[RMDB]
RNA sequence: GGGAACGACUCGAGUAGAGUCGAAAACCACUGCUCGAGGACGUCCUCCCUGUCUCCUCGGUUCUUCUUCGAUCCGGACCGGCUCAUCUCGGCAAAAGGCGGCAGUCCUCAGUGCUCUUACUCUUUCCUCUAUGUAUUCGUUCGCGAAUACAUAGAGAAAAGAAACAACAACAACAAC
Reactivity to 2A3 in 0.01 (KOAc 150mM, MgCl2 10mM, bicine 150mM(pH8.5), 24C), signal-to-noise 3, nucleotides 027 to 126: c010c010a060c050u030g000c010u020c040g000a010g040g060a130c010g040u030c000c010u020c000c000c000u020g040u010c040u020c020c010u030c020g020g010u020u010c020u090u010c010u070u110c060g090a090u000c020c020g010g030a070c020c010g020g000c030u020c020a120u030c030u030c030g020g000c020a050a060a020a060g040g000c010g010g000c010a030g030u020c000c000u030c020a050g020u030g050c010u020c010u100u120a120c010u010c000u020u010u000c000
Reactivity to DMS in 0.01 (KOAc 150mM, MgCl2 10mM, bicine 150mM(pH8.5), 24C), signal-to-noise 3, nucleotides 027 to 126: c050c030a220c060u010g000c010u010c040g010a000g010g000a140c050g000u000c050c020u000c010c010c020u010g010u010c020u000c010c030u000c030g000g010u010u000c030u000u010c100u010u000c100g010a070u010c080c060g020g000a130c080c030g010g010c050u000c100a070u000c070u000c070g030g010c090a090a070a110a110g000g000c080g010g000c040a080g000u000c030c010u010c070a060g000u010g000c040u010c090u000u020a070c180u000c010u010u000u010c000